[RMDB]
RNA sequence: GGGAACGACUCGAGUAGAGUCGAAAAGCUAUGUCCCCAGGGUCACGUGAACGCAUGGGACUACAGGUUCUGUGAGCGGUGCGGCUCGCCGAUCGGCGUGGUGCCCUGGCCGUCGGAGGAAUCAGGCUACUCUCUAUUGGUUCGCCAAUAGAGAGUAAAAAGAAACAACAACAACAAC
Reactivity to DMS in 0.01 (KOAc 150mM, MgCl2 10mM, bicine 150mM(pH8.5), 24C), signal-to-noise 7, nucleotides 027 to 126: g010c080u010a070u030g010u000c020c010c000c030a060g010g010g010u010c020a040c030g010u010g010a110a130c120g010c030a030u010g010g000g000a020c010u010a090c190a110g000g000u000u010c010u010g020u010g010a120g010c020g000g010u010g020c050g000g010c030u010c030g020c000c000g010a200u030c070g010g000c010g000u000g000g020u020g010c020c020c010u010g000g010c020c020g000u020c090g010g010a110g000g000a070a090u020c070a080g000g000c070
Reactivity to 2A3 in 0.01 (KOAc 150mM, MgCl2 10mM, bicine 150mM(pH8.5), 24C), signal-to-noise 9, nucleotides 027 to 126: g050c040u080a070u210g100u060c010c010c000c000a010g030g000g030u100c030a010c070g050u080g220a260a030c040g030c070a040u070g010g000g030a020c010u120a120c080a140g150g000u030u030c010u020g040u020g040a050g060c040g020g070u090g030c030g030g010c050u050c060g000c010c010g070a160u140c090g020g000c020g010u040g000g070u150g030c000c000c010u010g020g000c020c000g090u120c050g050g070a080g050g070a050a060u100c030a030g040g000c010